[RMDB]
RNA sequence: GGGAACGACUCGAGUAGAGUCGAAAAGAUAUGGAGCUGCGAUAAGCCUGAUAUCGGAAACGAUAUAGGCUUUUGACGCAGUCUCCUAAGUCAAAGAGAUACUCGGCGUUCGCGCCGAGUAUCUCAACCAUGCAGAUACGUUCGCGUAUCUGCAUGGAAAAGAAACAACAACAACAAC
Reactivity to DMS in 0.01 (KOAc 150mM, MgCl2 10mM, bicine 150mM(pH8.5), 24C), signal-to-noise 2, nucleotides 027 to 126: g000a020u000a300u000g010g000a020g030c000u000g010c000g020a170u000a030a040g020c000c030u010g000a030u000a000u010c000g030g010a140a080a110c000g000a010u010a000u010a020g000g010c000u000u000u010u010g010a200c080g000c000a030g000u000c010u000c000c000u000a010a080g000u000c030a070a120a170g010a010g010a010u000a000c000u020c000g000g000c000g060u010u010c300g000c000g050c000c000g000a000g000u000a000u000c000u000c020a030a090